[RMDB]
RNA sequence: GGGAACGACUCGAGUAGAGUCGAAAAGCAGCAGCACAGGCUGGAGAGGGCGAUAAGGAGGGGCACAUGGAUCGCAAUCCAGCUGCAGGUGGUGUGGGUGGCCCUAGUGGCACUGCUCUCCUGGCUGGCCCUGGAUAGAUUUCGAUCUAUCCAGGGCAAAAGAAACAACAACAACAAC
Reactivity to DMS in 0.01 (KOAc 150mM, MgCl2 10mM, bicine 150mM(pH8.5), 24C), signal-to-noise 1, nucleotides 027 to 126: g020c030a050g010c030a050g070c080a030c160a130g000g000c020u010g010g010a050g030a130g000g000g010c020g000a030u000a060a090g000g050a060g010g000g010g030c020a040c170a110u010g000g000a050u010c070g010c060a140a070u000c040c030a010g000c080u000g030c050a120g020g000u000g010g020u030g030u000g010g000g030u000g020g000c020c000c020u000a070g030u040g020g020c010a070c030u000g000c000u000c020u000c010c000u000g020g000c100u000g000
Reactivity to 2A3 in 0.01 (KOAc 150mM, MgCl2 10mM, bicine 150mM(pH8.5), 24C), signal-to-noise 1, nucleotides 027 to 126: g010c000a000g030c000a000g010c000a020c010a110g030g150c030u010g000g000a020g030a020g060g100g000c050g060a080u020a100a100g120g000a070g000g010g000g020c030a060c000a030u110g110g000a050u090c080g000c070a000a040u060c000c010a000g020c050u030g010c000a000g000g060u060g000g010u070g010u050g050g170g300u160g100g030c000c010c000u020a090g040u260g030g000c000a000c030u040g000c000u000c000u010c020c000u030g030g080c040u040g020
Source: RMDB library OK2TRN, as collected in RNAgym. Structure probing data (DMS and 2A3) for a 177-nucleotide construct. Values are in units of 0.01, from 0 to 300, in steps of 10. The 2A3 profile rests on 1,402 reads. For DMS the reverse transcriptase was MarathonRT. The reactions ran in a buffer of 150 mM KOAc, 10 mM MgCl2 and 150 mM bicine (pH 8.5), at 24 C.